[RMDB]
RNA sequence: GGGAACGACUCGAGUAGAGUCGAAAAGUGACUGAGAAACAGUCGCCACGAGCGGCGAUCCACGGGAGACACUAGCAUGGAGCCGGAAGUAAGACGAUAACGGUGAUCUCGUGUAAGUGUUAGGACGAGAAUCAUACAUUUUCGAAUGUAUGAUUCUAAAAGAAACAACAACAACAAC
Reactivity to DMS in 0.01 (KOAc 150mM, MgCl2 10mM, bicine 150mM(pH8.5), 24C), signal-to-noise 9, nucleotides 027 to 126: g010u020g000a040c020u000g000a170g030a140a110a140c050a040g010u000c010g010c010c030a110c140g010a110g010c050g000g000c010g000a070u000c040c030a100c060g000g010g000a140g000a040c030a020c010u000a220g020c050a030u010g000g010a100g000c020c010g000g010a090a130g000u000a100a070g010a240c130g010a100u030a060a140c010g000g010u010g000a130u010c030u010c020g000u000g000u000a070a060g010u010g010u000u000a070g000g010a170c160g000
Reactivity to 2A3 in 0.01 (KOAc 150mM, MgCl2 10mM, bicine 150mM(pH8.5), 24C), signal-to-noise 9, nucleotides 027 to 126: g050u040g010a010c000u020g010a010g090a140a140a020c010a020g000u000c000g010c010c010a130c070g060a060g020c020g020g000c010g020a060u000c010c000a020c030g020g020g010a070g010a010c000a000c010u020a030g010c000a020u020g010g010a000g010c010c000g000g020a060a010g050u150a060a060g120a050c080g040a070u090a180a020c020g010g020u040g070a160u000c080u040c070g010u010g010u020a080a040g000u000g010u030u040a030g010g050a020c040g010
Source: RMDB library OK1LIB, as collected in RNAgym. Structure probing data (DMS and 2A3) for a 177-nucleotide construct. For 2A3, 28,323 sequencing reads were counted. The DMS profile rests on 34,127 reads. Values cover nucleotides 27 to 126. The RNA was probed in 150 mM KOAc, 10 mM MgCl2 and 150 mM bicine (pH 8.5) at 24 C. DMS (dimethyl sulfate) methylates the pairing face of unpaired adenines and cytosines. Values are in units of 0.01, from 0 to 300, in steps of 10. For 2A3 the reverse transcriptase was SuperScript II with manganese.